RNA sequence: GGGAACGACUCGAGUAGAGUCGAAAAAUUUUGCUUGUCUGAUCUCCAGAUGUUUGUGGCUUGUAGGUUGAUAGUCUGAGCCUUGCUGCAUGCUCAUCUACUGGUGCAGGGAGCCCUACUGGAGCUGGGGAGAACGGGUUCACCAUGAGGCUCAUUGCCAUACGUAUGGGUUCGCCCAUACGUAUGGAAAAGAAACAACAACAACAAC
Reactivity to 2A3 in 0.01 (KOAc 150mM, MgCl2 10mM, bicine 150mM(pH8.5), 24C), signal-to-noise 2, nucleotides 027 to 156: a010u140u100u060u120g030c030u050u040g020u060c010u050g000a070u000c000u000c040c000a060g010a300u090g060u050u220u060g030u030g100g000c030u030u050g090u100a080g060g000u020u030g050a150u140a070g080u040c040u010g000a010g030c000c000u020u040g030c010u020g030c010a050u110g090c010u090c100a190u020c030u090a080c130u200g030g010u010g010c000a020g010g000g030a010g000c000c010c060u170a170c120u050g060g040a060g020c040u060g020g000g000g000a060g030a010a020c020g050g020g000u040u040c030a080c120c000a060u140g030a030g010g000c000u050c050a040u090u150g030

An RNA of 207 nucleotides, treated with 2A3 and read out base by base. The RNA was probed in 150 mM KOAc, 10 mM MgCl2 and 150 mM bicine (pH 8.5) at 24 C. Values cover nucleotides 27 to 156. 2A3 adducts were read by reverse transcription with SuperScript II with manganese.